Overview: Structure probing data (2A3) for a 207-nucleotide construct.
RNA sequence: GGGAACGACUCGAGUAGAGUCGAAAAGCGUACUACGAUCUUUUGACGACGAUAGUUGUCAGGUUCUCCCAAAUAGGAGAACCUUGGAUUUACUAUACCGUCGAUAAGAUCGUAUCGCAAACUCCGUUCUUCGCCCUUCGGGGCGAAGAACGGAGAAGAACACAAAUUGGUUCGCCAAUUUGUGUUCAAAAGAAACAACAACAACAAC
Reactivity to 2A3 in 0.01 (KOAc 150mM, MgCl2 10mM, bicine 150mM(pH8.5), 24C), signal-to-noise 2, nucleotides 027 to 156: g040c000g040u090a090c050u010a010c050g010a000u010c030u050u070u060u150g180a080c010g020a010c000g030a000u000a010g000u000u060g030u040c000a010g000g000u010u000c010u090c040c010c050a180a270a110u300a150g000g000a000g010a000a000c000c000u000u050g010g000a030u300u040u080a000c010u010a000u010a070c040c020g030u000c000g000a040u030a060a010g000a000u000c000g000u000a000u080c010g000c000a000a090a160c000u000c000c040g000u040u000c020u000u020c030g070c120c050c150u060u240c260g010g020g040g000c010g130a000a000g000a010a000c020g020g020a020g000a000a010
It was measured as part of the RMDB library RNAMAK. The RNA was probed in 150 mM KOAc, 10 mM MgCl2 and 150 mM bicine (pH 8.5) at 24 C.